[RMDB]
An RNA of 177 nucleotides, treated with DMS and 2A3 and read out base by base. Conditions: 150 mM KOAc, 10 mM MgCl2 and 150 mM bicine (pH 8.5), 24 C.

RNA sequence: GGGAACGACUCGAGUAGAGUCGAAAAAGCUGGCUCCGCAUCCGCUGCUCACCUACGCGGUCGAGCAGAACGCCGCCAGUCUCGACAUGCCGAUCGCAACGCUUGCCGCGAUGCGGCGCGGGGAACAGAACAGUCCUUCUUUCGAGAAGGACUGUUCAAAAGAAACAACAACAACAAC
Reactivity to DMS in 0.01 (KOAc 150mM, MgCl2 10mM, bicine 150mM(pH8.5), 24C), signal-to-noise 2, nucleotides 027 to 126: a100g000c030u010g000g010c000u000c210c170g000c010a090u000c190c210g020c000u000g000c020u000c020a010c020c000u000a120c300g050c150g010g020u000c070g040a020g010c000a000g020a070a050c150g010c020c120g000c000c050a020g010u030c010u000c000g050a100c100a100u010g010c040c040g040a060u000c030g000c020a070a240c100g000c130u000u010g050c060c120g000c020g000a000u000g030c000g000g010c040g000c050g000g000g020g000a090a070c170a150
Reactivity to 2A3 in 0.01 (KOAc 150mM, MgCl2 10mM, bicine 150mM(pH8.5), 24C), signal-to-noise 2, nucleotides 027 to 126: a000g020c000u000g000g000c000u050c060c000g000c000a040u070c030c020g040c040u020g020c020u010c010a010c010c000u110a130c300g110c240g030g010u030c150g000a000g000c000a030g000a030a020c060g020c050c010g000c030c010a020g060u040c020u030c030g070a060c060a060u180g000c040c000g010a050u030c040g000c070a100a060c050g030c190u150u230g090c090c060g020c010g030a040u100g150c010g000g000c000g000c010g010g040g010g000a070a110c070a060
The 2A3 profile rests on 1,454 reads. Reactivities are given for positions 27 through 126. For DMS the reverse transcriptase was MarathonRT. For DMS, 1,104 sequencing reads were counted.